[RMDB]
RNA sequence: GGGAACGACUCGAGUAGAGUCGAAAACGAUGUUGCUAACCCUAGCACUCCAGCCUACACUUUUACAACAGUGAAACCUGGCGCAGCAUUUAGUGUGUUAGCAUGCUAUAAUGGUCGUCCGACUGGUAUACAUUUGGGUUCGCCCAAAUGAAAAGAAACAACAACAACAAC
Reactivity to DMS in 0.01 (KOAc 150mM, MgCl2 10mM, bicine 150mM(pH8.5), 24C), signal-to-noise 9, nucleotides 027 to 129: c090g000a050u040g030u030u000g020c010u000a010a010c030c030c020u000a050g020c030a300c020u000c020c020a020g020c020c020u010a280c020a040c000u000u030u040u070a070c250a090a090c230a020g020u000g010a030a090a110c300c030u000g000g000c080g020c150a080g020c030a060u010u030u010a000g020u020g030u010g020u030u010a010g070c020a000u000g020c020u010a050u040a070a040u040g000g000u030c000g010u050c060c080g010a070c050u030g020g030u000a060u030a090
Reactivity to 2A3 in 0.01 (KOAc 150mM, MgCl2 10mM, bicine 150mM(pH8.5), 24C), signal-to-noise 9, nucleotides 027 to 129: c030g050a060u120g030u170u040g010c000u010a020a030c000c010c000u000a010g000c000a010c020u000c000c010a020g010c010c020u160a030c020a010c020u060u090u150u300a140c110a200a020c030a070g010u010g000a060a010a020c000c010u000g010g000c030g000c070a130g000c020a040u090u110u060a070g010u050g040u040g010u050u000a010g000c000a000u030g000c010u090a110u110a300a120u170g070g010u030c010g030u010c020c020g040a050c040u050g040g030u080a070u020a090

Structure probing data (DMS and 2A3) for a 170-nucleotide construct. DMS adducts were read by reverse transcription with MarathonRT. It was measured as part of the RMDB library 15KLIB.